[RMDB]
RNA sequence: GGGAACGACUCGAGUAGAGUCGAAAAUUAAAGUACGUAGAAGCGGCGUGAAGCAUGUAGAAAGCUUUGCCAGCAUAUCGAGCUACAUGUGAGCGAAAGCGGUUACGUACAACGAUAUGCAAAAAAAGAUGAUAAGUAGCUUCGGCUACUUAUCAUCAAAAGAAACAACAACAACAAC
Reactivity to 2A3 in 0.01 (KOAc 150mM, MgCl2 10mM, bicine 150mM(pH8.5), 24C), signal-to-noise 2, nucleotides 027 to 126: u070u040a040a000a010g000u000a000c000g000u010a000g030a130a030g180c040g240g030c050g030u030g050a020a010g010c000a000u020g000u000a020g030a180a100a000g010c020u080u070u080g070c070c030a000g040c010a000u010a020u040c060g020a020g060c000u010a000c010a000u020g080u140g020a020g040c090g070a260a030a020g020c000g010g040u030u020a000c000g000u000a000c000a000a000c000g000a010u010a020u040g000c000a000a000a000a040a040a040a090
Reactivity to DMS in 0.01 (KOAc 150mM, MgCl2 10mM, bicine 150mM(pH8.5), 24C), signal-to-noise 2, nucleotides 027 to 126: u000u010a050a080a130g000u000a000c000g020u000a020g020a090a080g010c020g000g020c080g040u010g020a110a190g000c000a010u010g000u000a040g010a030a110a100g000c070u000u010u000g010c050c060a150g010c000a020u000a020u010c040g000a130g000c010u010a010c010a010u000g000u000g000a290g020c040g020a060a110a080g000c000g000g000u000u000a010c010g010u000a000c010a030a070c070g000a010u000a010u000g020c030a000a000a020a090a100a060a100

Background: The record gives the reactivity of an RNA of 177 nucleotides to 2A3 and DMS. The DMS profile rests on 1,769 reads. Conditions: 150 mM KOAc, 10 mM MgCl2 and 150 mM bicine (pH 8.5), 24 C. 2A3 adducts were read by reverse transcription with SuperScript II with manganese. Source: RMDB library M2PK90, as collected in RNAgym.